[RMDB]
RNA sequence: GGGAACGACUCGAGUAGAGUCGAAAAAUAUCACCACCAUCUUCUGUACUUAUGACGCCGAUACCUUAAGCAAAGAUCCGGCAGAUGGUCGUAAAGUCAAAGGUGUUAUUCACUGGGUGAGCGCGGCUGUCAGCCUAUUGUUCGCAAUAGGCUGACAAAAAGAAACAACAACAACAAC
Reactivity to DMS in 0.01 (KOAc 150mM, MgCl2 10mM, bicine 150mM(pH8.5), 24C), signal-to-noise 1, nucleotides 027 to 126: a040u000a080u000c020a030c010c010a180c170c020a040u000c000u000u010c160u000g030u000a060c020u000u000a020u020g000a110c100g020c010c000g030a050u000a060c140c030u000u000a060a150g010c260a060a040a100g010a050u010c230c050g030g010c040a130g020a070u000g030g010u000c050g000u000a020a070a100g010u010c080a060a050a080g040g010u010g010u010u000a030u000u000c100a080c070u010g000g010g030u010g000a110g020c120g000c040g040g000c080